An RNA of 170 nucleotides, treated with DMS and 2A3 and read out base by base.
The reactions ran in a buffer of 150 mM KOAc, 10 mM MgCl2 and 150 mM bicine (pH 8.5), at 24 C.
Values cover nucleotides 27 to 129.
For DMS the reverse transcriptase was MarathonRT.
[RMDB]
RNA sequence: GGGAACGACUCGAGUAGAGUCGAAAAGCCCGUCGGCAGCAAACUCCUCUGGAGUCCUUCGGAUCCAAAGGAGAAAACUACCGGCGGAGGGUGAUCCACUCGGAGUUGGACGGGAAAAGCACAUCCAUAGCGACUCACUUCGGUGAGUCGAAAAGAAACAACAACAACAAC
Reactivity to DMS in 0.01 (KOAc 150mM, MgCl2 10mM, bicine 150mM(pH8.5), 24C), signal-to-noise 4, nucleotides 027 to 129: g000c100c000c010g000u000c010g000g020c050a050g000c000a030a160a290c010u000c010c060u050c040u010g000g000a040g080u000c000c040u110u040c150g030g010a020u030c020c020a020a060a020g000g000a000g010a010a060a140a230c020u000a100c070c000g040g020c000g000g050a060g020g020g070u060g020a010u050c060c020a070c070u020c040g000g000a040g030u000u110g070g060a100c000g020g030g050a050a060a000a110g010c030a080c070a000u080c020c010a160u060a120g010
Reactivity to 2A3 in 0.01 (KOAc 150mM, MgCl2 10mM, bicine 150mM(pH8.5), 24C), signal-to-noise 5, nucleotides 027 to 129: g040c010c000c000g000u000c000g010g020c020a000g000c040a100a050a030c000u000c000c000u000c020u010g020g010a080g260u070c010c000u170u160c140g000g000a010u000c000c000a010a010a010g000g000a000g000a030a030a000a000c000u010a010c000c000g000g000c040g010g010a070g030g030g000u050g020a060u010c000c010a020c020u010c010g050g000a060g040u080u050g060g010a010c010g010g010g020a030a080a020a020g040c050a050c000a120u070c020c020a050u130a030g090